Source: RMDB library OK3TST, as collected in RNAgym.
The record gives the reactivity of an RNA of 207 nucleotides to 2A3 and DMS.
RNA sequence: GGGAACGACUCGAGUAGAGUCGAAAACUUAGCUUCCUCCCUCUCCCACCAAGACUAUGAGAACUUCAGCUGAUAGCUGGGGGCUCCCCAGAUGAGGAUGCAGGGAUUUGGGAGCAGUGGAAGAGGGUGCCCAACCUUGGGUUGGACCAACCCUUGGACUUGAUUCCGUAUUCGUACGGAAUCAAGUAAAAGAAACAACAACAACAAC
Reactivity to 2A3 in 0.01 (KOAc 150mM, MgCl2 10mM, bicine 150mM(pH8.5), 24C), signal-to-noise 3, nucleotides 027 to 156: c010u100u110a010g000c000u020u020c000c010u000c020c000c000u000c000u000c010c010c020a010c020c060a090a040g070a060c070u180a130u300g030a010g010a260a120c000u000u020c000a000g010c000u080g120a280u280a120g000c000u000g000g000g010g000g010c020u000c020c010c030c040a060g030a220u100g030a110g040g010a020u080g010c100a030g050g010g030a040u150u240u300g060g000g020a000g010c010a020g020u080g060g070a110a080g020a000g000g010g020u030g010c010c000c000a000a020c010c020u110u200g210g000g070u000u010g010g080a090c040c030a040a060c050c000c000u010u010g030g030
Reactivity to DMS in 0.01 (KOAc 150mM, MgCl2 10mM, bicine 150mM(pH8.5), 24C), signal-to-noise 1, nucleotides 027 to 156: c030u000u020a110g020c030u000u000c000c010u000c010c000c010u000c040u010c010c000c000a050c070c040a080a110g010a100c060u000a180u000g000a030g010a060a180c010u000u010c000a020g060c020u000g030a220u000a070g050c000u010g000g000g000g030g030c040u030c000c000c000c050a230g010a050u000g010a160g000g010a050u000g060c140a050g010g010g030a100u000u000u010g030g000g010a010g020c030a080g040u050g000g010a090a120g000a070g020g010g010u010g000c020c000c000a030a070c020c010u000u000g030g050g050u010u010g020g000a050c020c020a100a050c040c000c000u000u000g020g030
For DMS, 3,055 sequencing reads were counted. The RNA was probed in 150 mM KOAc, 10 mM MgCl2 and 150 mM bicine (pH 8.5) at 24 C.